[RMDB]
RNA sequence: GGGAACGACUCGAGUAGAGUCGAAAAGAUAUGGACUGGGCGAUAAGCGUCAUUCGGAAACGAAUGUACGCUUUUGACGCCUCUGAGUCCUAAGUCAAAGCAAUGCCCUGUUCGCAGGGCAUUGCAACCAUAAUAUUUGCUUCGGCAAAUAUUAUGGAAAAGAAACAACAACAACAAC
Reactivity to 2A3 in 0.01 (KOAc 150mM, MgCl2 10mM, bicine 150mM(pH8.5), 24C), signal-to-noise 3, nucleotides 027 to 126: g010a020u040a010u050g000g000a000c010u030g030g000g000c030g050a100u080a300a010g010c010g010u000c000a010u010u000c010g000g020a040a010a010c020g010a010a010u010g030u080a000c010g010c010u000u000u010u020g010a000c000g010c010c030u020c050u060g130a010g000u000c010c000u010a070a010g020u030c070a170a070a050g000c000a000a010u000g000c010c010c000u000g020u030u070c290g000c070a000g000g000g020c000a000u000u000g000c000a000a000
Reactivity to DMS in 0.01 (KOAc 150mM, MgCl2 10mM, bicine 150mM(pH8.5), 24C), signal-to-noise 6, nucleotides 027 to 126: g000a040u010a180u010g000g000a010c010u000g010g010g020c010g010a090u000a030a020g020c000g010u000c000a010u000u000c000g010g000a070a040a100c000g010a010a000u000g000u020a000c000g020c000u000u000u000u000g000a240c030g010c000c010u000c230u010g000a030g000u000c000c000u010a040a110g000u000c020a110a130a160g010c000a000a000u000g000c000c000c000u000g010u000u010c210g020c010a020g000g000g000c000a000u000u000g000c010a040a040